[RMDB]
RNA sequence: GGGAACGACUCGAGUAGAGUCGAAAAUCGCCAGCAACCCCACCCACCGCGCCCUCGACGACGCUCGCGCCACCGUCGACGUGCUGCACGCACUCAUCGAGCGAGUGGGCAACCAGGGCGUGCACACAUCGCCUGUAGCUUUCGAGCUACAGGCGAUAAAAGAAACAACAACAACAAC
Reactivity to DMS in 0.01 (KOAc 150mM, MgCl2 10mM, bicine 150mM(pH8.5), 24C), signal-to-noise 1, nucleotides 027 to 126: u000c070g040c030c000a090g010c060a110a220c030c050c000c030a240c040c050c020a090c240c040g020c050g010c000c000c020u000c100g020a040c080g000a050c020g000c020u000c040g000c070g020c070c050a090c170c050g000u000c060g010a030c140g090u020g030c030u020g000c200a090c040g000c000a040c010u010c150a110u020c000g000a080g000c010g020a070g050u040g000g040g000c000a040a180c210c090a090g000g040g020c010g050u010g000c120a060c180a100c190
The record gives the reactivity of an RNA of 177 nucleotides to DMS. The DMS profile rests on 720 reads. Source: RMDB library OK2TST, as collected in RNAgym. The reactions ran in a buffer of 150 mM KOAc, 10 mM MgCl2 and 150 mM bicine (pH 8.5), at 24 C.